[RMDB]
Conditions: 150 mM KOAc, 10 mM MgCl2 and 150 mM bicine (pH 8.5), 24 C. An RNA of 207 nucleotides, treated with DMS and 2A3 and read out base by base. For 2A3, 1,671 sequencing reads were counted.
RNA sequence: GGGAACGACUCGAGUAGAGUCGAAAACAAAGACUAUUCAAGAAGUCAAGAACCUAUUCCGUCUGGUCGUCAGAAUCGACUUGAAUGGAUUGAAAACAAUCUUGAAAACAUUCGAUAGUCGAGAAAUGAGAAACAUCCAGAUAUGAUGGAUUUUAUGGUUUGCUAGUUACUUCGGUAACUAGCAAACAAAAGAAACAACAACAACAAC
Reactivity to DMS in 0.01 (KOAc 150mM, MgCl2 10mM, bicine 150mM(pH8.5), 24C), signal-to-noise 1, nucleotides 027 to 156: c010a100a110a120g010a030c000u000a050u000u000c040a090a060g020a260a300g010u000c050a120a190g000a060a060c170c010u000a040u000u000c060c020g000u000c000u000g000g000u040c160g000u000c010a210g030a150a300u000c000g010a060c000u000u000g010a090a050u000g000g000a150u000u000g000a230a070a110a050c040a120a050u000c040u010u020g000a010a140a120a260c090a160u000u000c030g050a090u000a010g050u000c050g010a070g000a050a030a160u000g000a140g040a220a050a050c060a050u010c000c000a000g010a060u000a080u000g010a030u020g000g000a060u010u030u030u030a110u000g020
Reactivity to 2A3 in 0.01 (KOAc 150mM, MgCl2 10mM, bicine 150mM(pH8.5), 24C), signal-to-noise 4, nucleotides 027 to 156: c030a020a090a000g020a000c010u050a040u170u230c070a090a010g050a120a010g160u020c030a000a030g060a050a050c040c050u140a120u110u000c010c000g000u000c020u010g000g010u000c040g030u050c070a040g110a130a080u050c000g000a000c000u040u040g030a050a020u010g020g020a000u030u160g040a080a130a020a060c040a010a070u030c000u030u130g030a060a050a010a060c010a010u040u060c020g080a080u050a050g000u000c020g010a010g040a050a220a050u150g020a090g060a040a090a020c040a020u030c010c000a010g040a060u070a080u160g120a070u060g010g020a030u060u090u110u200a080u110g110